[RMDB]
Background
Structure probing data (DMS and 2A3) for a 177-nucleotide construct. Conditions: 150 mM KOAc, 10 mM MgCl2 and 150 mM bicine (pH 8.5), 24 C. It was measured as part of the RMDB library OK2TST.
RNA sequence: GGGAACGACUCGAGUAGAGUCGAAAACUGCUGUGGGAAAGUACUUGGCAUAGUGAGACAGCACAAGGUGGCCAUGCGGCCAGAGGAGAGCAUAGGAACAGUAGUCAAGGCUGAGGAAGAUUAGCGGUAACGCUCUUGAGUUCGCUCAAGAGCGUUAAAAAGAAACAACAACAACAAC
Reactivity to DMS in 0.01 (KOAc 150mM, MgCl2 10mM, bicine 150mM(pH8.5), 24C), signal-to-noise 3, nucleotides 027 to 126: c070u000g000c060u020g010u010g000g000g000a120a100a080g010u010a050c060u000u010g010g010c030a080u010a080g020u000g010a140g010a080c100a080g010c060a080c100a110a100g010g020u000g010g010c020c040a120u010g030c150g000g000c030c020a060g010a080g010g010a060g000a060g020c060a060u010a100g010g010a060a070c060a060g010u000a070g000u000c080a040a100g010g000c050u000g010a050g010g000a060a050g010a090u000u000a050g020c080g020g000
Reactivity to 2A3 in 0.01 (KOAc 150mM, MgCl2 10mM, bicine 150mM(pH8.5), 24C), signal-to-noise 2, nucleotides 027 to 126: c020u020g010c020u030g010u040g060g060g010a050a170a110g070u030a110c000u020u040g050g000c040a060u030a060g040u010g050a060g010a080c030a020g010c030a020c040a090a040g130g000u050g040g000c030c030a080u240g170c110g010g010c000c050a030g000a030g040g020a070g000a000g000c020a050u120a100g010g050a050a000c030a040g030u080a010g050u060c030a100a010g010g040c010u030g020a010g010g070a020a060g030a130u050u050a030g030c040g060g000